The record gives the reactivity of an RNA of 177 nucleotides to DMS and 2A3. For 2A3, 948 sequencing reads were counted. The RNA was probed in 150 mM KOAc, 10 mM MgCl2 and 150 mM bicine (pH 8.5) at 24 C. The data come from the RNA Mapping Database (RMDB), library OK2TST.
RNA sequence: GGGAACGACUCGAGUAGAGUCGAAAAAAUUGUGUGACAUUGGACAAGCUUAAUCUAACGGAUAUGAAUGACACCUCAGUCGAUUUGAGAUCGUUGAGCUCCACUGCGCUGGUCCAGGGAGACGUGAGUCCGUUUUACGGUUCGCCGUAAAACGGACAAAAGAAACAACAACAACAAC
Reactivity to DMS in 0.01 (KOAc 150mM, MgCl2 10mM, bicine 150mM(pH8.5), 24C), signal-to-noise 2, nucleotides 027 to 126: a080a010u000u000g010u000g000u000g010a050c020a070u000u010g000g000a050c060a090a040g030c040u010u030a110a050u000c050u000a090a170c150g040g030a090u000a120u010g030a100a060u010g000a090c040a040c080c030u000c040a030g000u000c010g010a050u000u000u000g000a160g010a010u000c060g010u000u000g000a100g010c000u000c030c020a100c120u000g000c060g010c020u000g040g030u000c010c010a040g000g000g020a060g000a060c110g000u020g000a180
Reactivity to 2A3 in 0.01 (KOAc 150mM, MgCl2 10mM, bicine 150mM(pH8.5), 24C), signal-to-noise 1, nucleotides 027 to 126: a010a010u210u150g020u000g020u000g050a030c040a030u010u060g010g060a020c010a060a010g040c040u160u180a050a010u090c000u030a000a080c110g050g000a030u020a050u240g140a130a040u020g000a000c000a030c010c040u000c040a030g090u030c010g020a040u110u040u160g220a140g000a000u010c010g000u030u010g030a040g000c020u000c010c000a130c030u120g010c050g000c090u070g000g030u010c010c000a020g040g040g000a000g020a040c010g080u090g050a020